[RMDB]
RNA sequence: GGGAACGACUCGAGUAGAGUCGAAAAGCGACGGAGUCCACGGCGGCCGGGUACACCUGACGACCUCCAUCGCACCGCGCCUGACACAAUCACGCGGCCCAACCUCGGGAGAGAACGCUGAGCGUUAGCAACAGGGGAAGUUCGCUUCCCCUGUUGCAAAAGAAACAACAACAACAAC
Reactivity to DMS in 0.01 (KOAc 150mM, MgCl2 10mM, bicine 150mM(pH8.5), 24C), signal-to-noise 3, nucleotides 027 to 126: g020c010g010a030c060g000g000a140g000u020c010c080a180c180g040g030c090g030g060c040c070g000g020g000u050a040c110a140c030c020u000g010a120c170g000a110c110c010u000c000c000a070u010c060g010c020a180c030c000g040c050g000c080c080u020g010a040c100a080c150a070a150u000c050a090c020g010c000g020g000c010c030c020a140a130c100c080u020c030g040g000g000a050g000a110g010a000a060c050g020c030u000g010a050g010c040g020u000u000a150
Reactivity to 2A3 in 0.01 (KOAc 150mM, MgCl2 10mM, bicine 150mM(pH8.5), 24C), signal-to-noise 5, nucleotides 027 to 126: g010c010g020a020c030g020g010a010g040u010c040c030a040c040g020g000c030g040g020c040c070g050g010g000u100a060c070a060c040c010u020g030a020c030g040a070c000c050u000c010c000a030u030c020g010c010a020c000c010g000c010g020c010c070u080g020a030c020a010c010a160a090u060c010a010c040g010c000g020g000c000c000c000a030a050c010c020u020c010g030g030g000a100g000a010g030a050a000c030g020c060u050g030a040g030c030g030u020u020a040
Background
Chemical mapping of a 177-nucleotide RNA with DMS and 2A3. Conditions: 150 mM KOAc, 10 mM MgCl2 and 150 mM bicine (pH 8.5), 24 C. Values cover nucleotides 27 to 126. Source: RMDB library RFM100, as collected in RNAgym.